[RMDB]
RNA sequence: GGGAACGACUCGAGUAGAGUCGAAAAGAUAUGGAAUGCUGAGGGAGCUGGUCGGAAACGACGCAGCAUCGAUCUCAACAUUCCUAAGUCAAACUGAAAAGUAGGGGUUCGCCCCUACUUUUCAGAAGAAGUUUUUCUAGUUCGCUAGAAAAACUUCAAAAGAAACAACAACAACAAC
Reactivity to DMS in 0.01 (KOAc 150mM, MgCl2 10mM, bicine 150mM(pH8.5), 24C), signal-to-noise 1, nucleotides 027 to 126: g010a030u000a300u000g020g000a000a000u000g000c040u000g000a020g000g000g020a030g040c010u010g030g000u000c010g000g000a100a120a150c010g020a000c000g010c010a020g000c000a230u000c200g000a070u000c000u000c010a000a010c000a000u010u000c000c000u000a020a070g000u000c040a070a110a140c000u000g010a010a000a060a010g020u010a020g010g000g010g030u000u010c300g000c000c000c000c010u000a010c010u000u000u000u000c010a010g010a100a120
Chemical mapping of a 177-nucleotide RNA with DMS. Reactivities are given for positions 27 through 126. DMS adducts were read by reverse transcription with MarathonRT.